The data come from the RNA Mapping Database (RMDB), library OK1LIB. Chemical mapping of a 177-nucleotide RNA with DMS and 2A3. The RNA was probed in 150 mM KOAc, 10 mM MgCl2 and 150 mM bicine (pH 8.5) at 24 C. The 2A3 profile rests on 847 reads.
[RMDB]
RNA sequence: GGGAACGACUCGAGUAGAGUCGAAAACUGAGGACUCGAUGAUCUAUGGAGUCAAAAGCCUUGCUGAAAUCAACCAGCACCAGCAGGGUCCGAUGGGGUCUGUAGUGGAGUUGAUUGCCAAUACCGCGAGUAGUGGGUGAUUCGUCACCCACUACUCAAAAGAAACAACAACAACAAC
Reactivity to DMS in 0.01 (KOAc 150mM, MgCl2 10mM, bicine 150mM(pH8.5), 24C), signal-to-noise 2, nucleotides 027 to 126: c130u000g040a170g000g000a040c090u030c000g000a050u020g000a140u040c040u000a060u000g000g000a070g000u030c060a040a080a250a140g000c000c000u000u000g000c040u000g000a060a060a110u010c150a040a190c060c120a060g000c090a090c190c000a010g000c060a050g000g000g010u010c010c060g040a260u020g000g010g000g000u020c030u000g030u010a050g000u010g000g000a170g000u000u000g000a060u010u000g020c060c000a020a030u010a160c020c080g000c170
Reactivity to 2A3 in 0.01 (KOAc 150mM, MgCl2 10mM, bicine 150mM(pH8.5), 24C), signal-to-noise 2, nucleotides 027 to 126: c090u090g030a110g050g060a000c010u020c020g140a170u070g010a040u070c000u050a040u100g080g040a090g080u050c000a080a050a000a000g000c000c000u000u000g000c020u000g000a100a100a100u120c060a060a130c070c040a000g070c050a020c080c000a030g010c000a000g000g010g030u000c080c010g020a050u070g020g000g000g170u000c000u010g050u010a060g010u070g090g030a070g010u010u010g100a150u050u090g050c000c000a020a020u000a120c000c070g070c020